[RMDB]
RNA sequence: GGGAACGACUCGAGUAGAGUCGAAAAGGAAGCUAUGGACUCUGGUGACACCUCACCACAAGUUCUUAAGGCUUUGCAGAAGGCUGUUAAUAUAGCUAAAAACGCCUAUGAGAAGGAUAAGGCAGUGAACGCCCCUUCUUCGGAAGGGGCAAAAGAAACAACAACAACAAC
Reactivity to 2A3 in 0.01 (KOAc 150mM, MgCl2 10mM, bicine 150mM(pH8.5), 24C), signal-to-noise 3, nucleotides 027 to 129: g080g000a070a000g010c010u000a040u210g000g000a010c000u020c040u010g000g000u000g010a020c090a070c090c020u000c010a000c020c000a000c010a010a040g000u030u020c000u090u140a140a060g020g030c030u030u010u020g010c040a020g060a120a020g070g030c030u050g030u130u040a080a020u110a070u060a070g050c030u030a000a060a000a040a010c060g020c000c000u010a070u090g060a050g010a080a010g000g040a010u030a040a020g020g000c020a060g000u020g120a080a000c070
Reactivity to DMS in 0.01 (KOAc 150mM, MgCl2 10mM, bicine 150mM(pH8.5), 24C), signal-to-noise 1, nucleotides 027 to 129: g000g000a100a010g030c000u030a130u000g000g010a020c020u020c300u050g030g000u020g000a130c220a160c240c220u000c010a020c000c060a060c220a090a030g040u020u010c020u000u000a060a100g010g020c000u000u000u000g000c000a090g000a050a070g000g030c050u000g010u010u060a080a140u000a110u030a040g010c150u010a000a070a060a010a030c120g010c060c020u040a070u000g010a030g030a090a070g000g000a040u010a020a130g000g060c070a000g010u070g030a090a040c170
Chemical mapping of a 170-nucleotide RNA with 2A3 and DMS. The DMS profile rests on 7,748 reads. Reactivities are given for positions 27 through 129. For 2A3 the reverse transcriptase was SuperScript II with manganese.